[RMDB]
RNA sequence: GGGAACGACUCGAGUAGAGUCGAAAAGCCGAAAUGUUCAUCAUGAGCACGCAUAAUUUACCGCUCAAUUUUCUGAUUGAUCAGUUAAAGGAAGAUAUCAGCGAAGUUAUCUUCGUCGGCAUCCAGCCGCGUAUCGACUUUUCGAAGUCGAUACGCGAAAAGAAACAACAACAACAAC
Reactivity to DMS in 0.01 (KOAc 150mM, MgCl2 10mM, bicine 150mM(pH8.5), 24C), signal-to-noise 2, nucleotides 027 to 126: g010c000c000g000a010a090a080u000g000u000u000c000a070u020c130a090u010g020a030g020c040a080c180g000c100a140u010a100a090u000u010u020a080c140c110g000c030u000c010a040a080u000u000u030u050c300u010g000a040u010u010g000a060u000c010a050g020u020u000a030a050a170g000g010a020a000g010a010u000a010u000c040a050g020c150g000a110a120g010u010u000a010u000c000u010u000c000g010u000c000g000g010c000a090u000c020c010a110g020c150
Reactivity to 2A3 in 0.01 (KOAc 150mM, MgCl2 10mM, bicine 150mM(pH8.5), 24C), signal-to-noise 3, nucleotides 027 to 126: g000c000c000g000a010a030a070u090g000u010u030c010a050u030c040a090u130g000a000g000c020a030c080g110c020a060u100a210a080u290u180u160a160c040c080g000c040u010c030a070a090u120u070u120u090c050u090g030a070u140u040g020a030u040c010a010g100u110u260a080a060a040g110g000a000a010g020a020u020a000u000c020a010g190c080g210a200a010g010u010u010a010u000c010u010u010c000g020u000c000g000g040c000a020u010c000c010a000g100c050

Structure probing data (DMS and 2A3) for a 177-nucleotide construct.
Reactivities are rounded to 0.1 and cut off at 0 and 3.
For 2A3, 2,560 sequencing reads were counted.